[RMDB]
RNA sequence: GGGAACGACUCGAGUAGAGUCGAAAAGCAGCCUUAUAGGAAAAGCCAGGCAUGCAUAGCAUCCGCCGGAGGCCGUCCGAGUUCCGCAUUCGUCAUGCUUGGUGCAUUGUGGGAUAUUAGAGCAGACCUAUGUAGAUUGCUUCGGCAAUCUACAUAGAAAAGAAACAACAACAACAAC
Reactivity to DMS in 0.01 (KOAc 150mM, MgCl2 10mM, bicine 150mM(pH8.5), 24C), signal-to-noise 5, nucleotides 027 to 126: g010c060a100g010c010c020u000u010a110u010a120g010g010a080a080a090a210g010c030c010a060g020g010c020a030u000g010c060a120u010a120g000c080a080u010c080c080g010c070c030g020g000a080g000g020c090c080g020u000c030c050g010a130g020u000u000c050c040g010c060a150u010u000c090g010u010c030a030u000g000c040u000u010g010g020u000g010c090a070u000u000g030u000g000g010g000a080u000a080u000u000a090g010a060g010c050a100g010a130c180
Reactivity to 2A3 in 0.01 (KOAc 150mM, MgCl2 10mM, bicine 150mM(pH8.5), 24C), signal-to-noise 3, nucleotides 027 to 126: g050c020a010g010c000c010u150u130a220u160a110g100g010a020a060a050a020g010c000c010a020g000g020c020a000u040g000c030a080u090a150g000c020a040u040c070c040g040c040c040g050g030a060g070g190c050c040g030u030c010c010g050a050g040u020u030c010c020g030c030a040u080u090c050g120u090c030a010u030g030c030u030u050g000g000u040g020c070a090u050u080g020u070g040g050g020a030u050a100u110u080a070g030a020g010c020a000g020a060c020
Chemical mapping of a 177-nucleotide RNA with DMS and 2A3. The DMS profile rests on 5,710 reads. It was measured as part of the RMDB library OK2TST. The RNA was probed in 150 mM KOAc, 10 mM MgCl2 and 150 mM bicine (pH 8.5) at 24 C.